[RMDB]
RNA sequence: GGGAACGACUCGAGUAGAGUCGAAAAUUUUAAUAACCUUUUAGGGUUUGAUUCUAGUAAACCAGUCACUAAGAAAUACACUUACUCCUUCUUGCCUAAAGAAGACGGCGAUGUGUUGUUGGCUGAGCACCUUUGGGCUUCGGCCCAAAGAAAAGAAACAACAACAACAAC
Reactivity to 2A3 in 0.01 (KOAc 150mM, MgCl2 10mM, bicine 150mM(pH8.5), 24C), signal-to-noise 1, nucleotides 027 to 129: u000u020u030u050a000a000u010a000a010c000c060u180u020u120u000a060g130g000g040u000u000u270g000a000u080u000c010u090a020g000u070a050a010a020c000c000a120g000u030c050a000c000u160a280a110g110a110a300a020u150a010c000a000c000u110u110a110c000u000c000c000u010u000c000u000u000g000c000c030u200a060a000a000g020a030a040g000a000c040g000g060c110g240a220u080g000u000g000u030u040g000u000u000g170g000c130u000g000a030g000c020a230c050
Reactivity to DMS in 0.01 (KOAc 150mM, MgCl2 10mM, bicine 150mM(pH8.5), 24C), signal-to-noise 1, nucleotides 027 to 129: u060u010u030u040a050a170u000a080a000c020c000u000u000u010u020a100g000g000g000u010u000u000g000a070u000u000c020u000a110g000u000a050a130a120c070c040a050g020u020c020a020c070u020a170a030g010a000a000a000u000a020c040a010c090u070u040a130c040u030c080c010u050u030c000u000u000g020c110c070u000a050a090a000g010a090a000g000a150c210g060g000c010g040a070u040g020u010g010u060u000g060u040u030g010g000c030u000g000a100g020c060a100c090